Source: RMDB library TTRDEL, as collected in RNAgym. The record gives the reactivity of an RNA of 177 nucleotides to 2A3 and DMS. For 2A3 the reverse transcriptase was SuperScript II with manganese. The RNA was probed in 150 mM KOAc, 10 mM MgCl2 and 150 mM bicine (pH 8.5) at 24 C. DMS adducts were read by reverse transcription with MarathonRT.
[RMDB]
RNA sequence: GGGAACGACUCGAGUAGAGUCGAAAAGAUAUGGACGAGGUAGAGAGCGAAGAACUCGGAAACGAGGGAGCUCACUACUCGUCCUAAGUCAAAGGUCUACGGUGCACUUCGGUGCACCGUAGACCAAGGAAGUAUAUGUGUUCGCACAUAUACUUCCAAAAGAAACAACAACAACAAC
Reactivity to 2A3 in 0.01 (KOAc 150mM, MgCl2 10mM, bicine 150mM(pH8.5), 24C), signal-to-noise 1, nucleotides 027 to 126: g030a010u070a070u150g000g010a010c000g010a070g000g100u090a020g030a000g010a010g080c020g100a300a090g010a110a070c000u000c010g000g040a040a050a030c000g010a020g000g020g030a020g020c000u010c020a000c010u010a000c000u000c000g000u000c000c000u010a030a010g040u000c040a010a060a170g000g020u020c000u000a000c050g040g000u000g020c000a000c070u100u140c300g060g010u030g060c000a000c000c000g000u000a000g000a000c000c000a000a000
Reactivity to DMS in 0.01 (KOAc 150mM, MgCl2 10mM, bicine 150mM(pH8.5), 24C), signal-to-noise 2, nucleotides 027 to 126: g010a060u000a300u010g000g010a020c000g010a010g010g010u000a000g010a130g020a010g010c020g030a110a190g010a100a250c010u000c000g000g000a110a110a130c020g010a020g000g030g010a020g020c000u000c010a060c010u000a030c000u000c000g010u000c000c000u000a000a050g010u000c030a090a090a080g010g010u000c000u000a030c000g000g000u000g010c050a010c000u000u000c200g020g000u010g000c000a000c000c000g000u000a000g000a000c000c000a010a040